Overview: An RNA of 207 nucleotides, treated with 2A3 and DMS and read out base by base.
RNA sequence: GGGAACGACUCGAGUAGAGUCGAAAAAGGCGCCGUGCCAGACAAGGGGAAUUGCUUGUGUUACACGUUAUGUAACUCUCCCGCCAUGAACCCGAUCACUAAUGAGAAUCCCGCAGCGUUUUUCUGCGAUGUGGAUAGAGCAAGCUUUCUGUGCGCCAGAACGGAGUUGAUUCGUCAACUCCGUUCUAAAAGAAACAACAACAACAAC
Reactivity to 2A3 in 0.01 (KOAc 150mM, MgCl2 10mM, bicine 150mM(pH8.5), 24C), signal-to-noise 2, nucleotides 027 to 156: a030g020g000c000g030c010c010g090u100g030c000c020a060g020a070c050a090a150g040g000g010g000a040a050u070u000g020c030u070u040g020u000g010u120u030a000c040a020c050g190u180u180a260u300g010u000a000a000c000u010c030u020c000c040c020g020c080c010a040u040g000a070a090c040c000c000g020a030u160c070a040c110u160a160a070u190g030a090g080a090a090u050c030c000c020g000c010a010g000c050g050u000u000u120u280u280c040u140g000c000g030a030u000g070u100g040g060a010u050a060g030a020g040c010a030a060g000c000u070u150u000c100u070g070u040g030c000g000c010c030
Reactivity to DMS in 0.01 (KOAc 150mM, MgCl2 10mM, bicine 150mM(pH8.5), 24C), signal-to-noise 1, nucleotides 027 to 156: a130g040g010c010g070c000c100g020u000g020c000c040a110g000a090c100a140a070g000g010g050g050a060a030u000u000g030c020u010u000g010u000g000u000u010a020c030a040c100g000u010u000a220u010g020u020a020a020c010u000c030u000c010c020c030g040c130c020a110u000g000a100a120c020c010c020g100a180u000c050a120c040u000a070a200u020g000a200g000a040a130u000c020c020c010g030c010a040g000c170g030u000u000u020u000u000c110u000g000c000g020a100u000g010u000g010g000a060u000a040g010a040g000c020a080a150g020c070u010u000u000c050u000g010u010g000c020g020c020c030

The data come from the RNA Mapping Database (RMDB), library OK3TST. 2A3 adducts were read by reverse transcription with SuperScript II with manganese. For DMS the reverse transcriptase was MarathonRT.